An RNA of 207 nucleotides, treated with 2A3 and read out base by base. For 2A3 the reverse transcriptase was SuperScript II with manganese. The RNA was probed in 150 mM KOAc, 10 mM MgCl2 and 150 mM bicine (pH 8.5) at 24 C. For 2A3, 421 sequencing reads were counted.

RNA sequence: GGGAACGACUCGAGUAGAGUCGAAAAAACAUGAUUUUCCUGGUCACUGGCCAGGAGUGGUCGACAAGAUAGACUAUUACUUGCAAUCACAGAGCAGUGCAAGCUGGCUUGGCAGUUUAUUAUGCCUGUAUCAACUGGUGAAGACAUAUGAAUAUAAGUAUCAACUCGGUUUCGACCGAGUUGAUACAAAAGAAACAACAACAACAAC
Reactivity to 2A3 in 0.01 (KOAc 150mM, MgCl2 10mM, bicine 150mM(pH8.5), 24C), signal-to-noise 1, nucleotides 027 to 156: a000a000c170a140u190g060a120u140u150u050u000c000c000u000g010g010u100c100a090c300u240g000g030c010c000a000g000g010a000g020u080g000g010u020c000g020a080c010a020a000g010a240u090a040g080a030c100u020a140u120u200a020c020u000u000g040c030a070a110u140c030a140c060a140g010a060g040c020a000g010u040g040c010a030a020g080c010u020g010g010c030u000u150g040g090c040a000g000u040u040u040a130u050u080a100u060g000c000c050u090g120u000a090u020c030a040a110c000u020g060g000u000g030a030a010g020a030c080a000u240a110u170g000a080a000u130a000u050a170a040